[RMDB]
RNA sequence: GGGAACGACUCGAGUAGAGUCGAAAAGAUAUGGAUCAUGUAUGGAGCCUAUCGGAAACGAUGAGGCGAUGAAAUACACGUGAUCCUAAGUCAAAGACAUGCAGGUUCUUCGGAACCUGCAUGUCAACGAUUUUGGUUUGUUCGCAAACCAAAAUCGAAAAGAAACAACAACAACAAC
Reactivity to DMS in 0.01 (KOAc 150mM, MgCl2 10mM, bicine 150mM(pH8.5), 24C), signal-to-noise 1, nucleotides 027 to 126: g030a040u010a300u020g020g000a010u000c000a030u000g010u000a020u000g000g000a070g040c020c000u010a100u010c000g000g030a070a070a160c000g030a010u000g030a010g010g020c000g020a080u020g000a080a040a020u000a010c070a020c180g020u000g000a000u000c000c000u010a020a110g030u010c020a080a100a220g000a000c010a020u000g020c000a010g000g000u010u000c000u010u000c260g040g000a000a010c010c000u000g000c010a000u000g000u000c000a040a070
Description:
Structure probing data (DMS) for a 177-nucleotide construct. The reactions ran in a buffer of 150 mM KOAc, 10 mM MgCl2 and 150 mM bicine (pH 8.5), at 24 C. For DMS, 1,076 sequencing reads were counted. It was measured as part of the RMDB library TTRDEL.